[RMDB]
RNA sequence: GGGAACGACUCGAGUAGAGUCGAAAAUCGCAGCAUACUCAGAGGCAGUAGAGGGUAACAAGGGUUCAGGGUUCUUAGCUAUGAACAAGGUUGAUGGUAAACUAACCCUCUUCCAACCUGACCCUGACUUCUUACCUGACACACAGGAACGAGUAGAUAGGUGGAUGAAAUUCGUUUCAUCCACCUAAAAAGAAACAACAACAACAAC
Reactivity to 2A3 in 0.01 (KOAc 150mM, MgCl2 10mM, bicine 150mM(pH8.5), 24C), signal-to-noise 3, nucleotides 027 to 156: u090c010g000c050a030g020c040a050u010a070c010u020c040a010g030a090g160g000c030a010g050u040a010g010a020g020g020g000u020a030a030c060a090a080g110g010g010u190u130c010a030g030g000g030u020u020c010u070u110a080g000c090u130a100u300g020a010a010c020a040a040g040g000u020u020g010a060u070g010g000u070a150a150a090c070u100a030a040c040c000c000u030c030u000u000c010c020a060a030c000c010u000g020a020c000c000c010u000g020a040c020u100u090c000u010u010a040c000c000u020g060a040c010a000c000a020c000a100g100g020a070a030c040g030a020g000u060a010g070a130
Reactivity to DMS in 0.01 (KOAc 150mM, MgCl2 10mM, bicine 150mM(pH8.5), 24C), signal-to-noise 2, nucleotides 027 to 156: u000c050g020c040a130g000c040a190u020a050c030u000c020a160g020a090g010g030c020a140g040u000a050g020a300g010g010g000u000a090a040c130a030a030g010g000g040u000u000c010a030g000g000g010u010u000c040u000u000a100g020c100u010a140u000g000a040a070c040a110a080g000g030u000u000g010a100u020g030g010u010a060a060a060c100u000a070a030c020c000c020u000c020u000u020c030c040a080a100c010c010u000g000a080c010c000c000u000g000a080c040u000u000c030u000u000a040c040c020u010g000a220c060a100c080a100c040a060g000g010a090a080c050g020a090g000u010a050g000a300